[RMDB]
This 207-nucleotide RNA was probed chemically with 2A3. 2A3 adducts were read by reverse transcription with SuperScript II with manganese. Conditions: 150 mM KOAc, 10 mM MgCl2 and 150 mM bicine (pH 8.5), 24 C. The data come from the RNA Mapping Database (RMDB), library OK3TST.
RNA sequence: GGGAACGACUCGAGUAGAGUCGAAAAUUCGGUUUCAACUGAAUUCUAAGCACAAAAUUCACUGAGAUCAUAAGUUAAGCACAAAAACAAACACAACUUCCAAACUAUCAUUCAAACUAAAACCCUAGAAUGGUGAAAUUGGAGAGUAGAAAAGGGAGUACCUGCAUGAUUUCGAUCAUGCAGGUACAAAAGAAACAACAACAACAAC
Reactivity to 2A3 in 0.01 (KOAc 150mM, MgCl2 10mM, bicine 150mM(pH8.5), 24C), signal-to-noise 1, nucleotides 027 to 156: u060u040c050g000g020u090u070u000c060a030a020c050u010g000a010a000u060u000c010u130a080a050g070c050a040c030a050a120a090a050u030u000c010a010c060u020g000a000g000a030u000c020a060u040a250a040g090u140u030a060a020g170c060a030c060a110a050a040a060a000c080a040a170a000c090a030c010a100a120c000u070u000c000c000a040a010a010c050u030a050u010c000a010u030u020c010a060a060a060c060u220a120a000a150a190c000c030c000u010a000g010a080a010u020g010g000u000g050a030a080a030u070u000g000g000a080g010a020g040u080a010g040a040a050a070a000g030g060g010a060